[RMDB]
RNA sequence: GGGAACGACUCGAGUAGAGUCGAAAAUGGAAGCGCCUACGGCCGAGCGCACUCUCCAGGGGCCUCCGCGGCCGGGGCCGCGUCGCUACCACCCCUACAGACGCCGGAGGAAGGAGGAACGAGGCCACGGUGUUGAGAUGUUCGCAUCUCAAUACUGAAAAGAAACAACAACAACAAC
Reactivity to 2A3 in 0.01 (KOAc 150mM, MgCl2 10mM, bicine 150mM(pH8.5), 24C), signal-to-noise 1, nucleotides 027 to 126: u230g060g050a180a000g000c000g000c000c000u210a300c090g000g000c000c010g000a020g000c000g000c000a050c020u050c000u010c020c010a020g030g000g040g020c000c000u020c010c030g040c020g000g000c020c000g000g000g010g000c000c020g010c020g030u030c020g000c030u040a050c000c030a030c010c010c000c010u040a020c030a070g040a030c030g040c060c050g040g010a020g030g010a060a040g020g010a020g010g000a040a000c020g010a020g010g000c000c010a010
Reactivity to DMS in 0.01 (KOAc 150mM, MgCl2 10mM, bicine 150mM(pH8.5), 24C), signal-to-noise 1, nucleotides 027 to 126: u030g000g000a300a300g000c050g000c000c030u000a300c160g000g000c000c000g000a300g000c270g000c180a100c020u000c030u000c040c030a090g030g010g010g000c020c030u000c090c080g070c010g010g020c040c040g000g000g010g040c040c110g020c110g020u000c090g000c030u010a080c050c030a140c020c000c020c010u010a020c080a120g010a070c010g000c030c090g010g010a070g000g000a070a100g010g000a040g000g000a090a120c080g010a100g000g010c040c040a220
The data come from the RNA Mapping Database (RMDB), library OK1LIB. Structure probing data (2A3 and DMS) for a 177-nucleotide construct. For 2A3, 4,279 sequencing reads were counted. For DMS, 4,220 sequencing reads were counted. The reactions ran in a buffer of 150 mM KOAc, 10 mM MgCl2 and 150 mM bicine (pH 8.5), at 24 C. Values are in units of 0.01, from 0 to 300, in steps of 10.